[RMDB]
RNA sequence: GGGAACGACUCGAGUAGAGUCGAAAACUCCGCCUUAAGGGUGUUGCCUAUGAAGGGCUUUUUGCCAGAUCAAGAGGGUGGAGAUAUGUACCUGAAGACGUUAAACCAAGUCUGACGAUGCUGGUACCCUAUUGUACGUGUUCGCACGUACAAUAGGAAAAGAAACAACAACAACAAC
Reactivity to DMS in 0.01 (KOAc 150mM, MgCl2 10mM, bicine 150mM(pH8.5), 24C), signal-to-noise 7, nucleotides 027 to 126: c010u000c000c010g020c000c000u000u000a130a090g000g010g010u000g000u010u000g010c020c010u010a180u010g020a150a220g010g010g000c010u000u000u010u010u010g010c010c020a100g000a130u000c160a070a130g010a090g000g000g030u000g000g000a020g010a070u000a030u010g010u000a040c000c000u000g000a170a050g010a040c030g010u010u000a040a110a150c170c160a080a100g010u000c020u000g000a200c130g020a110u000g010c070u000g000g010u000a080c090
Reactivity to 2A3 in 0.01 (KOAc 150mM, MgCl2 10mM, bicine 150mM(pH8.5), 24C), signal-to-noise 5, nucleotides 027 to 126: c010u000c000c000g020c010c010u050u050a100a060g120g010g000u050g120u130u160g010c000c020u100a110u250g210a120a190g020g000g000c000u080u020u010u120u090g020c010c010a090g000a220u150c060a080a000g040a040g150g010g000u000g000g020a020g010a000u060a040u090g010u010a020c010c000u020g080a040a010g050a030c090g020u110u200a110a070a060c080c040a130a040g040u000c040u020g040a040c060g050a030u120g040c050u040g020g010u030a030c000